The record gives the reactivity of an RNA of 177 nucleotides to DMS and 2A3. Conditions: 150 mM KOAc, 10 mM MgCl2 and 150 mM bicine (pH 8.5), 24 C. DMS adducts were read by reverse transcription with MarathonRT. For DMS, 5,817 sequencing reads were counted.
RNA sequence: GGGAACGACUCGAGUAGAGUCGAAAAACUUUUCAGAUGUCAUAGCUGUGGAGCUCUCAGAGGGAUCACUUGACAUUGAGUCCAUCUUUGAUGGAGCACCUAUCUUGUGGUCUGCUGAGGUGGAAGAGAACAUAAGCCAUUUCGAUGGCUUAUGUUCAAAAGAAACAACAACAACAAC
Reactivity to DMS in 0.01 (KOAc 150mM, MgCl2 10mM, bicine 150mM(pH8.5), 24C), signal-to-noise 4, nucleotides 027 to 126: a060c060u010u000u010u000c040a060g000a100u000g000u010c140a090u000a090g010c030u000g000u000g010g010a070g010c060u010c000u000c020a020g010a090g000g000g010a020u000c000a010c010u000u000g000a020c100a080u010u000g000a270g000u000c000c000a010u000c000u010u010u010g000a020u000g000g010a020g010c050a110c130c070u000a070u000c010u010u000g010u000g010g010u000c000u000g010c010u000g000a020g020g020u010g010g010a080a090g000a190
Reactivity to 2A3 in 0.01 (KOAc 150mM, MgCl2 10mM, bicine 150mM(pH8.5), 24C), signal-to-noise 4, nucleotides 027 to 126: a000c020u060u060u090u090c040a050g030a120u090g150u170c030a060u090a140g020c030u040g030u090g080g060a030g020c000u020c000u010c040a010g010a040g080g060g010a000u000c000a010c010u000u000g010a030c030a190u040u100g030a030g070u000c010c000a030u000c070u140u140u300g030a030u000g000g010a010g010c020a050c030c000u020a050u040c010u000u010g000u010g030g000u000c000u050g040c010u020g010a020g020g010u020g010g020a120a010g060a010